[RMDB]
RNA sequence: GGGAACGACUCGAGUAGAGUCGAAAAUCAGGAUGAGGAAGAGAUGUACAACCCGAGUGGAUGCACGUGGCAACUUCUCUCCGUCUCCUUACACAGAGCCGCAAAUCUCGGGUUCGGCAUCGCGAUACCUAAUCAGUGGGUUCGCCCACUGAUUAGGAAAAGAAACAACAACAACAAC
Reactivity to DMS in 0.01 (KOAc 150mM, MgCl2 10mM, bicine 150mM(pH8.5), 24C), signal-to-noise 4, nucleotides 027 to 126: u010c070a110g010g010a050u030g020a120g010g020a130a110g000a040g000a020u010g020u000a100c110a090a040c040c010c000g000a040g010u000g000g000a140u000g040c080a080c150g020u000g010g010c030a090a080c110u000u010c020u000c030u000c010c010g000u000c040u000c010c010u010u010a070c160a100c150a100g010a110g030c040c030g030c060a060a080a100u000c000u010c010g000g010g010u000u000c100g010g000c000a020u000c000g000c110g010a120u020a070
Reactivity to 2A3 in 0.01 (KOAc 150mM, MgCl2 10mM, bicine 150mM(pH8.5), 24C), signal-to-noise 3, nucleotides 027 to 126: u090c020a010g090g000a080u100g050a060g080g030a050a070g040a040g000a080u010g000u050a290c010a010a030c000c000c000g010a010g010u060g070g120a150u190g070c120a020c120g010u010g000g000c000a070a080c040u100u040c000u020c010u010c010c020g040u000c010u010c020c010u070u110a020c080a000c010a010g130a060g070c000c030g050c040a030a120a170u000c000u000c000g000g010g130u010u010c040g030g000c010a010u020c000g020c010g020a030u090a130
Source information
Chemical mapping of a 177-nucleotide RNA with DMS and 2A3. It was measured as part of the RMDB library OK2TRN. Conditions: 150 mM KOAc, 10 mM MgCl2 and 150 mM bicine (pH 8.5), 24 C. 2A3 adducts were read by reverse transcription with SuperScript II with manganese. DMS adducts were read by reverse transcription with MarathonRT. For DMS, 2,849 sequencing reads were counted.